[RMDB]
Source information: This 177-nucleotide RNA was probed chemically with DMS and 2A3. The data come from the RNA Mapping Database (RMDB), library OK1LIB. The RNA was probed in 150 mM KOAc, 10 mM MgCl2 and 150 mM bicine (pH 8.5) at 24 C. The 2A3 profile rests on 3,276 reads.
RNA sequence: GGGAACGACUCGAGUAGAGUCGAAAAGAAAACAAGUACCGAGAACAUUGUUUUCGCUGCUUGGCGUUGCCGUUUUGUGUUGCAGUUGGUUGGGUAACGCCGCAAAUACCAACGGAAUAGAUAGAUAAUACGUAAUUAGGUUCGCCUAAUUACGUAUAAAAGAAACAACAACAACAAC
Reactivity to DMS in 0.01 (KOAc 150mM, MgCl2 10mM, bicine 150mM(pH8.5), 24C), signal-to-noise 8, nucleotides 027 to 126: g010a050a030a090a120c020a010a010g000u000a040c230c020g000a060g000a030a020c020a180u030u030g020u000u000u000u000c000g020c150u000g000c010u010u000g000g000c030g000u010u000g000c010c010g020u030u010u010u020g020u010g000u000u020g000c090a130g010u000u010g010g000u000u010g010g010g020u000a030a070c250g000c000c010g000c120a020a040a070u020a050c010c010a030a020c020g000g020a100a090u030a100g010a100u030a060g010a130u020a070
Reactivity to 2A3 in 0.01 (KOAc 150mM, MgCl2 10mM, bicine 150mM(pH8.5), 24C), signal-to-noise 5, nucleotides 027 to 126: g010a000a010a010a000c020a000a020g040u050a100c050c070g040a020g030a080a020c140a300u170u290g000u000u010u000u010c000g000c030u010g000c010u050u100g010g000c010g010u000u010g020c000c020g040u060u050u170u090g210u030g010u030u100g060c080a080g010u060u050g060g010u050u090g070g000g000u030a020a010c020g000c000c000g020c000a040a060a020u160a030c000c000a010a020c030g000g020a080a100u130a050g190a040u030a020g130a030u150a240